[RMDB]
An RNA of 207 nucleotides, treated with 2A3 and read out base by base. For 2A3, 813 sequencing reads were counted. The data come from the RNA Mapping Database (RMDB), library RNAMAK. The RNA was probed in 150 mM KOAc, 10 mM MgCl2 and 150 mM bicine (pH 8.5) at 24 C.
RNA sequence: GGGAACGACUCGAGUAGAGUCGAAAAGAUCUUUCGAGAUCGGAUGGGAUAUGGACCGAACUACGAUCGGCGUGUGGCGUUGAAAGGAGCUCGGAAACGAGCUCCUGGAGCCACACCGAGAUCGCGGUCCUAAGUCUAUAGGGGAGUUCGCUCCCAACAUAGCGUUGAGCUUCGGCUCAACGCUAUGAAAAGAAACAACAACAACAAC
Reactivity to 2A3 in 0.01 (KOAc 150mM, MgCl2 10mM, bicine 150mM(pH8.5), 24C), signal-to-noise 1, nucleotides 027 to 156: g000a000u000c020u040u080u110c140g100a040g060a300u040c050g040g060a220u300g000g020g000a030u030a020u100g000g010a010c030c030g030a190a140c080u180a070c220g020a000u000c000g030g050c120g020u020g000u010g000g030c010g140u300u040g020a020a020a010g000g000a010g000c000u000c030g040g000a110a000a000c010g000a000g000c000u000c000c000u000g000g000a010g000c000c000a000c000a000c000c000g000a020g020a000u010c000g000c000g040g000u000c000c000u000a000a030g000u040c000u020a060u150a230g000g020g000g000a040g000u070u130c080g030c030u000c000c000c000a000a030